[RMDB]
RNA sequence: GGGAACGACUCGAGUAGAGUCGAAAACACCAGAUGACCAGCACUUUAAAAACUCCGGAAAUAUUCCACAUCUGCUUGUCGUUCGGUCCAACCUCUUUCUAUCUUAAGUGCUUGUACGUCACCAACCAUAUAUAUGAUCGUUCGCGAUCAUAUAUAUAAAAGAAACAACAACAACAAC
Reactivity to 2A3 in 0.01 (KOAc 150mM, MgCl2 10mM, bicine 150mM(pH8.5), 24C), signal-to-noise 9, nucleotides 027 to 126: c070a040c010c020a020g020a070u040g020a030c010c000a000g010c010a020c030u070u110u180a070a140a050a080a020c040u050c050c030g060g060a030a110a070u200a120u120u070c030c010a050c010a120u040c020u060g030c030u060u070g050u070c020g040u040u040c030g020g030u010c010c020a050a060c040c020u020c000u030u100u010c040u060a140u020c020u050u080a060a010g010u010g030c000u040u040g030u060a110c030g010u020c020a020c040c020a050a030c040c030
Reactivity to DMS in 0.01 (KOAc 150mM, MgCl2 10mM, bicine 150mM(pH8.5), 24C), signal-to-noise 5, nucleotides 027 to 126: c140a150c080c050a110g000a050u010g010a100c010c030a070g010c030a020c040u000u020u020a070a070a080a140a100c100u010c040c080g000g010a090a060a080u020a050u000u000c040c020a050c100a060u000c040u020g000c030u010u000g010u000c030g010u010u000c050g010g000u010c020c030a080a060c050c020u010c020u010u010u010c020u000a050u010c060u010u010a060a060g010u010g000c020u000u000g010u020a070c090g010u000c040a070c050c060a060a100c170c140
Overview
An RNA of 177 nucleotides, treated with 2A3 and DMS and read out base by base. 2A3 adducts were read by reverse transcription with SuperScript II with manganese. The RNA was probed in 150 mM KOAc, 10 mM MgCl2 and 150 mM bicine (pH 8.5) at 24 C. Values are in units of 0.01, from 0 to 300, in steps of 10. The data come from the RNA Mapping Database (RMDB), library OK1LIB.